[RMDB]
RNA sequence: GGGAACGACUCGAGUAGAGUCGAAAAGAAUGAAUUCCUGUGACAGCAUGAACAUACACCCACCAACAUGUCUGUAAUAGAAACCACUUUGGAAGACACUAGAGGCUGCCACAGAUUUCUCAGGUCCUCACAGCAAGACAGUGGUGGUCUUGGGGAAAUUUAAAUGGCGAUUCGUCGCCAUUUAAAUAAAAGAAACAACAACAACAAC
Reactivity to 2A3 in 0.01 (KOAc 150mM, MgCl2 10mM, bicine 150mM(pH8.5), 24C), signal-to-noise 3, nucleotides 027 to 156: g110a030a040u130g040a020a110u080u030c020c010u020g030u010g050a030c020a000g020c020a060u070g100a170a000c060a030u240a020c070a100c020c010c010a020c030c000a070a040c010a080u080g050u050c020u020g040u090a080a050u090a170g100a070a070a080c030c020a080c110u140u120u070g050g010a070a020g020a030c030a010c070u060a040g030a060g220g000c020u030g020c020c000a020c010a030g080a070u030u120u030c090u000c010a020g010g050u030c000c000u080c020a060c020a020g130c070a090a020g010a080c080a030g030u020g020g040u030g000g020u020c000u060u020g000g000g020g000a000a130
Reactivity to DMS in 0.01 (KOAc 150mM, MgCl2 10mM, bicine 150mM(pH8.5), 24C), signal-to-noise 2, nucleotides 027 to 156: g030a150a090u000g010a090a120u010u010c030c020u000g010u000g020a060c030a030g020c000a120u000g000a120a080c070a130u010a040c030a200c210c030c010a100c030c000a040a300c080a050u000g000u010c000u000g000u000a060a100u010a030g030a060a080a070c050c000a050c080u020u020u000g010g020a210a100g000a110c010a060c040u000a150g040a060g000g010c020u000g000c000c000a050c030a060g000a190u000u020u000c020u010c030a070g020g030u000c000c030u000c020a120c070a100g030c050a100a110g000a200c110a040g020u000g010g040u010g030g000u000c020u000u000g000g000g020g000a050a070